The record gives the reactivity of an RNA of 207 nucleotides to 2A3. The data come from the RNA Mapping Database (RMDB), library OK3TST. For 2A3, 432 sequencing reads were counted. 2A3 adducts were read by reverse transcription with SuperScript II with manganese. Conditions: 150 mM KOAc, 10 mM MgCl2 and 150 mM bicine (pH 8.5), 24 C.
RNA sequence: GGGAACGACUCGAGUAGAGUCGAAAAUGAAGACAUCAAUGCAGCUGCCUGGCUCAAUACAAAUUCGCAGGCAAAACAUGUGAAGGACUGUUGUACGAUGGUCAGGCUUUAUAAGACAGCCAUUAUGAGGAGCCUGUCUAUAUCAGGGUGGAUACACCCCUCUGUGUCCGUUCGCGGACACAGAGGGAAAAGAAACAACAACAACAAC
Reactivity to 2A3 in 0.01 (KOAc 150mM, MgCl2 10mM, bicine 150mM(pH8.5), 24C), signal-to-noise 1, nucleotides 027 to 156: u090g000a030a000g030a010c030a010u050c000a000a240u080g020c070a030g030c040u010g000c000c020u000g060g000c030u100c100a020a060u060a080c010a000a050a080u100u070c020g060c000a020g040g000c000a070a000a000a000c090a040u090g030u040g050a020a050g030g100a010c020u080g000u040u030g080u080a010c100g040a050u060g020g000u000c050a010g000g000c000u010u100u000a110u020a040a000g060a010c100a060g020c040c040a030u180u300a040u130g100a030g050g090a000g030c030c000u020g000u010c010u020a120u000a010u130c040a040g060g000g000u040g000g000a050u100a170c000a100c060